Chemical mapping of a 177-nucleotide RNA with 2A3 and DMS.
RNA sequence: GGGAACGACUCGAGUAGAGUCGAAAACAGGACUCUAAUCAUCCAGCAUUUUGCUCAGCCGUGAGGUCCCUCUAAUCAUUGUGGUAACACUGUCCUGCUAUUGGCCUCUGAACCUACAGCCUGUCAGCCUGUAAGACCUGUUCGCAGGUCUUACAGGAAAAGAAACAACAACAACAAC
Reactivity to 2A3 in 0.01 (KOAc 150mM, MgCl2 10mM, bicine 150mM(pH8.5), 24C), signal-to-noise 2, nucleotides 027 to 126: c000a020g110g060a040c020u000c030u120a130a080u110c030a050u020c030c010a010g030c050a050u090u080u070u190g030c020u010c060a030g030c000c030g060u030g020a040g000g070u070c070c020c040u060c040u080a110a120u070c080a090u070u120g020u040g060g030u050a040a040c000a000c090u030g030u020c010c020u000g030c000u020a040u140u140g070g020c010c000u000c000u000g020a050a010c000c000u040a050c030a030g040c020c000u030g040u100c000a030g060
Reactivity to DMS in 0.01 (KOAc 150mM, MgCl2 10mM, bicine 150mM(pH8.5), 24C), signal-to-noise 2, nucleotides 027 to 126: c210a130g000g000a080c040u000c060u020a080a070u000c070a050u000c090c080a050g000c020a090u020u010u010u000g000c000u000c060a070g000c060c050g000u010g000a100g010g000u000c010c020c020u000c080u000a080a070u000c100a070u010u000g020u010g000g000u010a050a100c090a030c070u000g010u000c030c020u010g010c010u010a110u020u010g020g040c040c050u010c000u000g000a040a080c040c040u010a100c100a040g020c030c010u000g010u000c070a140g000
Reactivities are given for positions 27 through 126.
In probing experiments dimethyl sulfate is read out at A N1 and C N3, which are open when not base-paired.
Conditions: 150 mM KOAc, 10 mM MgCl2 and 150 mM bicine (pH 8.5), 24 C.
For 2A3 the reverse transcriptase was SuperScript II with manganese.
It was measured as part of the RMDB library OK2TST.